[RMDB]
RNA sequence: GGGAACGACUCGAGUAGAGUCGAAAAGAAAGAAAGAAAGAAAUCUGACAGAAUGACGGAUUCGAUCGUUGUGGUCGGCGGGCCACCACGUCAUUCCUUCGCACUGUCUCCGGGCAGACCGCCACAAAAAAGCGGAUCUACUUCGGUAGAUCCGCAACUGCAUGUAUGGGUUCGCCCAUACAUGCAGAAAAGAAACAACAACAACAAC
Reactivity to 2A3 in 0.01 (KOAc 150mM, MgCl2 10mM, bicine 150mM(pH8.5), 24C), signal-to-noise 1, nucleotides 027 to 156: g040a030a040a000g060a030a070a000g080a040a080a030g100a050a090a040u100c060u090g010a010c030a040g110a160a180u090g010a040c010g040g020a000u080u120c140g040a060u160c040g030u010u020g010u000g000g000u020c030g020g060c120g020g010g030c010c000a000c010c000a000c010g000u010c010a020u020u020c010c000u040u070c020g030c010a020c040u000g000u000c000u020c000c000g020g010g000c010a010g050a090c000c100g000c040c010a050c080a010a120a010a000a000a000g000c000g000g000a000u000c000u010a000c020u010u040c170g100g010u020a000g010a010u030c020c000g000c000a000a000